[RMDB]
Chemical mapping of a 177-nucleotide RNA with 2A3 and DMS. For DMS, 15,535 sequencing reads were counted. The reactions ran in a buffer of 150 mM KOAc, 10 mM MgCl2 and 150 mM bicine (pH 8.5), at 24 C. High 2A3 reactivity points to a flexible backbone, as in loops and unpaired stretches.
RNA sequence: GGGAACGACUCGAGUAGAGUCGAAAAGAUAUGGAGCUUAAAGAUCUUUGAUCACGUCAAUCGGAAACGAUUGCGUGGGAGAUCCGAGCUCCUAAGUCAAACGUAAACAGUGUUCGCACUGUUUACGGGUUACUCUAAGGUUCGCCUUAGAGUAACCAAAAGAAACAACAACAACAAC
Reactivity to 2A3 in 0.01 (KOAc 150mM, MgCl2 10mM, bicine 150mM(pH8.5), 24C), signal-to-noise 7, nucleotides 027 to 126: g010a000u020a020u080g000g000a000g010c020u080u090a180a140a130g020a020u030c010u300u300u170g080a070u040c010a000c020g230u200c140a010a010u000c000g000g020a020a010a010c000g000a000u010u010g010c000g000u010g000g010g000a060g000a000u000c030c030g000a000g000c000u000c000c000u010a020a000g000u000c030a130a050a080c020g000u010a000a010a000c010a010g010u010g090u140u200c300g090c100a000c000u010g000u010u000u010a000c000g000
Reactivity to DMS in 0.01 (KOAc 150mM, MgCl2 10mM, bicine 150mM(pH8.5), 24C), signal-to-noise 6, nucleotides 027 to 126: g010a010u000a100u010g000g000a010g020c000u000u000a070a180a230g000a000u000c000u000u000u020g010a050u010c000a010c010g000u020c040a000a010u000c010g030g010a020a020a050c010g010a010u000u000g000c010g020u000g000g010g000a010g010a010u000c000c160g000a020g020c010u000c000c000u000a000a060g000u000c010a130a110a300c000g000u000a000a000a010c000a000g020u000g020u000u020c280g020c000a010c010u000g010u000u000u000a000c000g000